Chemical mapping of a 207-nucleotide RNA with 2A3.
RNA sequence: GGGAACGACUCGAGUAGAGUCGAAAAGAUAUGGAGUAAUCAGAGUUAGACCCAUCAAUGACGUCUUGUCGGAAACGACAAGAUAAGACAGAUGGGUUCUAACGACGAAGAUUACUCCUAAGUCAAACUUAUACAACUGUUCGCAGUUGUAUAAGAAGACUAGUGCAGUGUUCGCACUGCACUAGUCAAAAGAAACAACAACAACAAC
Reactivity to 2A3 in 0.01 (KOAc 150mM, MgCl2 10mM, bicine 150mM(pH8.5), 24C), signal-to-noise 1, nucleotides 027 to 156: g020a000u050a000u120g000g000a020g000u000a000a000u000c010a000g030a010g110u040u020a000g000a000c000c080c000a000u000c010a000a300u090g040a060c040g030u010c010u000u000g010u000c010g030g000a100a110a010c000g000a000c010a000a000g000a000u000a030a000g040a020c010a010g030a000u020g020g010g000u120u050c010u020a010a000c020g010a000c010g030a010a020g000a000u000u000a000c000u000c010c000u000a050a010g000u020c040a050a030a070c010u000u000a010u000a000c000a000a010c000u000g040u110u090c260g030c110a000g000u000u010g020u030a000u020a000a010g000a030a000
For 2A3, 1,452 sequencing reads were counted. Source: RMDB library RNAMAK, as collected in RNAgym.